[RMDB]
RNA sequence: GGGAACGACUCGAGUAGAGUCGAAAAGAUAUGGAGAAGUGCAACAGCAUCAGGUUCGGAAACGAACCGAUGACAUGCACCUCCUAAGUCAAACUCAGCAUUUAGACUUCGGUCUAAAUGCUGAGAAGAAUGAUCACCAGUUCGCUGGUGAUCAUUCAAAAGAAACAACAACAACAAC
Reactivity to 2A3 in 0.01 (KOAc 150mM, MgCl2 10mM, bicine 150mM(pH8.5), 24C), signal-to-noise 2, nucleotides 027 to 126: g020a010u060a030u060g040g020a030g030a300a160g040u000g000c040a110a090c040a280g100c010a020u020c140a170g020g000u000u020c010g020g070a030a050a030c000g010a000a010c000c000g000a000u000g000a020c020a040u040g000c020a000c000c000u010c000c000u020a140a020g050u020c050a070a020a080c010u020c010a000g010c000a000u000u020u010a000g000a010c010u050u050c300g040g020u010c010u010a000a000a030u000g000c000u000g010a000g000a000a020
Reactivity to DMS in 0.01 (KOAc 150mM, MgCl2 10mM, bicine 150mM(pH8.5), 24C), signal-to-noise 2, nucleotides 027 to 126: g030a030u000a300u000g000g010a000g000a100a130g050u000g000c010a040a050c300a110g030c020a010u000c020a120g060g000u000u000c000g010g010a090a050a220c000g010a020a010c000c010g010a000u000g000a040c040a160u000g010c000a000c020c000u000c000c000u000a030a090g010u000c030a110a060a240c000u000c000a000g000c000a000u000u000u000a000g010a010c010u000u010c180g030g020u000c000u000a000a000a000u000g010c000u000g000a000g000a030a070
An RNA of 177 nucleotides, treated with 2A3 and DMS and read out base by base. It was measured as part of the RMDB library TTRDEL. High 2A3 reactivity points to a flexible backbone, as in loops and unpaired stretches. DMS adducts were read by reverse transcription with MarathonRT. The reactions ran in a buffer of 150 mM KOAc, 10 mM MgCl2 and 150 mM bicine (pH 8.5), at 24 C.